The record gives the reactivity of an RNA of 207 nucleotides to 2A3. High 2A3 reactivity points to a flexible backbone, as in loops and unpaired stretches.

RNA sequence: GGGAACGACUCGAGUAGAGUCGAAAACUCGCUGUUUUUGUGGCUGGCUUUCAGCGGGCUGGAGGAGCCGGGAGCUGAGGCGGAGGACCGAGCCAAAAACGUCAGCCGAGGCCGGGCGGCCCCGCUCAAAAUCUUCGUAUCUUCGGAUACGAAGAAAGAAAAAUACUAGCUUCGGCUAGUAUUUUUCAAAAGAAACAACAACAACAAC
Reactivity to 2A3 in 0.01 (KOAc 150mM, MgCl2 10mM, bicine 150mM(pH8.5), 24C), signal-to-noise 1, nucleotides 027 to 156: c010u010c020g000c020u010g020u060u060u040u040u050g080u020g040g030c040u020g020g020c040u060u030u070c030a040g040c010g020g020g020c040u030g070g040a080g010g040a040g030c060c000g040g070g010a090g000c020u010g030a000g040g000c070g010g030a120g040g010a020c020c130g010a040g040c080c000a110a130a000a030a080c010g060u040c020a020g000c060c020g010a000g010g000c070c040g050g030g010c030g020g040c030c020c020c010g000c010u040c050a050a140a070a150u000c010u000u010c000g000u000a000u010c010u050u080c230g080g000a010u000a000c000g000a000a000g000a010a020a000